[RMDB]
RNA sequence: GGGAACGACUCGAGUAGAGUCGAAAAAUUCGUUGUCGAUGUCCGAACCCAUCGGAGCCGCUGGCGGGGCACACGCUGGCGAUCGUGGCAACGUUUGGGCGAGCGGCGCGGCCACGGCUGCGCUUGACCAAAGCAGACAUUUCGAUGUCUGCUUUGGAAAAGAAACAACAACAACAAC
Reactivity to DMS in 0.01 (KOAc 150mM, MgCl2 10mM, bicine 150mM(pH8.5), 24C), signal-to-noise 2, nucleotides 027 to 126: a050u000u030c060g040u000u000g040u000c000g010a140u000g040u000c010c020g000a040a120c000c000c000a100u010c020g020g000a190g010c200c040g000c010u000g010g000c010g000g000g070g010c090a070c090a100c010g030c010u010g000g010c000g000a040u040c130g000u020g020g000c000a060a050c010g000u020u020u040g000g000g020c090g000a120g010c090g040g020c000g020c050g020g000c000c010a140c190g010g020c020u000g020c050g020c000u000u010g020a180
Reactivity to 2A3 in 0.01 (KOAc 150mM, MgCl2 10mM, bicine 150mM(pH8.5), 24C), signal-to-noise 2, nucleotides 027 to 126: a000u130u100c050g000u000u000g030u060c040g060a100u070g070u030c000c000g020a070a060c050c010c020a010u020c000g040g010a030g100c010c000g000c030u000g030g000c000g020g000g120g030c090a020c020a000c060g000c000u030g000g000c020g020a050u040c060g120u130g030g010c030a060a000c020g000u030u020u000g050g030g060c070g040a100g050c020g000g000c000g000c000g010g020c000c040a020c070g070g000c040u060g000c050g000c020u010u040g010a000